[RMDB]
RNA sequence: GGGAACGACUCGAGUAGAGUCGAAAAUGUUUGCCCUUCGGGGCAAACAAUAGAAGCGUCACGAGCAAAGGGCAAGCUCGGAAAAGGACGCAAUUGCCGAAAAUACCCUAUGUUUCGACAUAGGGAAGUUUCUUCAUUGAUUCGUCAAUGAAGAAACAAAAGAAACAACAACAACAAC
Reactivity to DMS in 0.01 (KOAc 150mM, MgCl2 10mM, bicine 150mM(pH8.5), 24C), signal-to-noise 3, nucleotides 027 to 126: u000g000u000u000u000g010c000c000c000u000u010c220g030g010g010g020c000a000a000a000c000a030a070u000a100g010a150a170g000c000g020u000c000a140c000g000a010g000c010a070a070a120g010g020g020c070a240a130g000c010u010c000g010g000a050a050a110a140g010g000a020c010g010c010a040a040u010u010g030c010c020g010a070a090a110a120u020a160c010c010c000u000a000u000g010u000u000u010c120g000a040c000a010u000a020g000g000g010a020a030
Reactivity to 2A3 in 0.01 (KOAc 150mM, MgCl2 10mM, bicine 150mM(pH8.5), 24C), signal-to-noise 4, nucleotides 027 to 126: u030g000u000u000u000g010c000c000c000u000u030c270g040g000g000g000c000a000a010a000c000a000a000u130a030g120a170a040g020c000g000u010c040a030c170g030a000g000c040a110a060a090g120g040g000c050a040a020g000c020u000c000g010g030a120a220a000a020g200g000a000c010g000c010a010a090u140u080g050c020c010g060a050a050a020a050u170a100c010c000c010u020a000u000g050u010u070u080c210g020a010c000a010u010a000g000g000g000a000a010
An RNA of 177 nucleotides, treated with DMS and 2A3 and read out base by base. Conditions: 150 mM KOAc, 10 mM MgCl2 and 150 mM bicine (pH 8.5), 24 C. The DMS profile rests on 3,324 reads. 2A3 adducts were read by reverse transcription with SuperScript II with manganese. For DMS the reverse transcriptase was MarathonRT. Source: RMDB library M2PK50, as collected in RNAgym.